[RMDB]
RNA sequence: GGGAACGACUCGAGUAGAGUCGAAAAAAGUGGUUCAAAGGCAUCACCCUCCACCUGACUGCAAUGCGACCAACAUUGCUGACAACGAGAAAAUUGGGGCUGCGAGCAGACGCAACAGCAGAAUGGAUAUAGUACAAGGGUUCGCCCUUGUACUAUAAAAAGAAACAACAACAACAAC
Reactivity to DMS in 0.01 (KOAc 150mM, MgCl2 10mM, bicine 150mM(pH8.5), 24C), signal-to-noise 6, nucleotides 027 to 126: a070a060g020u010g000g010u000u000c080a060a120a130g010g010c040a060u000c050a100c050c010c020u000c020c040a070c060c060u010g010a180c060u000g010c030a020a030u000g010c020g010a230c140c080a100a200c020a040u000u010g000c010u000g000a100c100a040a080c090g000a120g000a070a050a050a120u000u000g030g020g010g000c040u000g010c050g000a090g010c070a050g020a060c070g030c050a050a040c070a090g000c030a050g000a080a070u000g010g010a230
Reactivity to 2A3 in 0.01 (KOAc 150mM, MgCl2 10mM, bicine 150mM(pH8.5), 24C), signal-to-noise 2, nucleotides 027 to 126: a000a000g150u100g010g030u090u090c040a090a080a070g100g010c030a050u050c030a040c020c010c030u010c030c010a010c000c030u050g120a110c000u010g000c000a000a040u010g020c020g090a060c030c000a020a020c000a020u040u020g000c010u030g060a050c010a070a030c060g070a020g080a150a140a050a040u090u080g060g000g000g000c060u020g020c010g010a030g020c020a020g030a070c060g000c030a060a130c000a060g030c030a010g050a080a050u080g040g010a010